[RMDB]
RNA sequence: GGGAACGACUCGAGUAGAGUCGAAAAGAAAUGAGUCUCACUGAGGUCAAAUGUUGCCCCAGCUGCCUCACUUUCGCAAGGUGGGCCCAACGGCAAGUGUGUCUACCCAGUACCCUGGAGGGGGGAUGUCUGUGGGCUUCAUGUGUCCAGGCAUUGACCCUCACUAUGGUUUCGACCAUAGUGAGGGAAAAGAAACAACAACAACAAC
Reactivity to 2A3 in 0.01 (KOAc 150mM, MgCl2 10mM, bicine 150mM(pH8.5), 24C), signal-to-noise 2, nucleotides 027 to 156: g070a030a150a030u100g010a020g070u020c010u070c080a030c030u050g020a060g100g000u090c040a060a070a070u030g030u060u030g020c000c000c060c000a000g020c090u140g010c000c030u120c110a230c050u020u090u080c050g000c090a080a090g040g000u020g000g000g000c000c120c000a050a070c020g150g000c160a160a150g080u090g000u030g000u030c000u010a020c000c000c030a070g060u170a200c010c000c070u080g060g020a060g000g000g010g040g000g000a020u020g020u010c010u080g110u280g040g000g020c010u030u070c090a040u090g110u010g030u110c020c010a030g100g000c020a050u040u080g050a020

Conditions: 150 mM KOAc, 10 mM MgCl2 and 150 mM bicine (pH 8.5), 24 C.
This 207-nucleotide RNA was probed chemically with 2A3.
For 2A3 the reverse transcriptase was SuperScript II with manganese.